[RMDB]
RNA sequence: GGGAACGACUCGAGUAGAGUCGAAAAAGAAAGGAUACCGAAAGGUAUCCAAUUUGCACAUUGGAUAGCGGUAACCUCUCACGUGUGACGUUGAAGUAACUAUGUGCAGUAAUACCGCAAGAAAAAAGAAAUCUUAAAAGUUCGCUUUUAAGAUUUCAAAAGAAACAACAACAACAAC
Reactivity to 2A3 in 0.01 (KOAc 150mM, MgCl2 10mM, bicine 150mM(pH8.5), 24C), signal-to-noise 2, nucleotides 027 to 126: a000g120a040a060a020g010g000a000u010a010c000c010g060a090a010a020g010g010u000a010u000c010c000a000a010u000u000u010g000c000a010c020a020u030u040g160g090a180u200a150g020c000g000g020u010a020a010c000c000u000c000u020c030a010c020g110u260g210u240g180a040c020g000u040u070g030a200a060g010u010a040a030c020u010a000u010g010u010g000c010a000g000u040a020a100u010a040c000c000g010c030a000a070g060a080a070a010a000a000a020
Reactivity to DMS in 0.01 (KOAc 150mM, MgCl2 10mM, bicine 150mM(pH8.5), 24C), signal-to-noise 3, nucleotides 027 to 126: a140g000a100a110a170g010g010a010u000a000c000c000g000a090a060a180g000g010u000a010u000c000c000a010a020u000u010u000g000c020a020c010a020u010u000g020g010a150u010a080g030c000g010g000u010a140a050c050c010u000c030u000c030a010c010g010u010g020u010g020a030c010g020u000u010g010a010a090g000u000a060a060c040u000a030u000g010u010g000c000a030g000u000a030a050u000a040c000c000g010c060a170a150g010a000a040a030a050a130a090
Structure probing data (2A3 and DMS) for a 177-nucleotide construct. The 2A3 profile rests on 2,639 reads. The RNA was probed in 150 mM KOAc, 10 mM MgCl2 and 150 mM bicine (pH 8.5) at 24 C. It was measured as part of the RMDB library M2PK90. For DMS, 2,531 sequencing reads were counted.